[RMDB]
RNA sequence: GGGAACGACUCGAGUAGAGUCGAAAAUUCUUCUUCGAUUCGGACCGGCUCAUCUCGACAAGAGGCGGCAGUCCUCAGUACUCUUACUCUUUUCUGUAAAGAGGAGACUGCUGGACCCGCCGCCCAAGUUCGAGCAUGAGCCAAUUCCGAACGAAGAUCUAGACCAAUGGUUCGCCAUUGGUCUAGAAAAAGAAACAACAACAACAAC
Reactivity to 2A3 in 0.01 (KOAc 150mM, MgCl2 10mM, bicine 150mM(pH8.5), 24C), signal-to-noise 1, nucleotides 027 to 156: u000u000c000u060u000c000u000u000c020g300a300u000u000c010g000g000a040c010c080g000g000c000u000c010a010u000c000u000c010g000a030c000a110a110g060a230g060g020c000g000g000c010a000g010u000c030c000u000c000a030g000u140a270c020u000c000u120u130a160c010u010c060u090u160u130u040c230u300g300u300a010a010a000g000a040g030g000a000g010a000c000u000g120c030u010g010g000a010c010c030c200g000c020c000g010c000c000c000a030a010g040u060u020c000g000a000g000c000a000u000g000a000g010c000c000a010a010u000u000c000c000g000a000a000c000g010a000a000g000a000
Overview
This 207-nucleotide RNA was probed chemically with 2A3. Conditions: 150 mM KOAc, 10 mM MgCl2 and 150 mM bicine (pH 8.5), 24 C. It was measured as part of the RMDB library VIROID.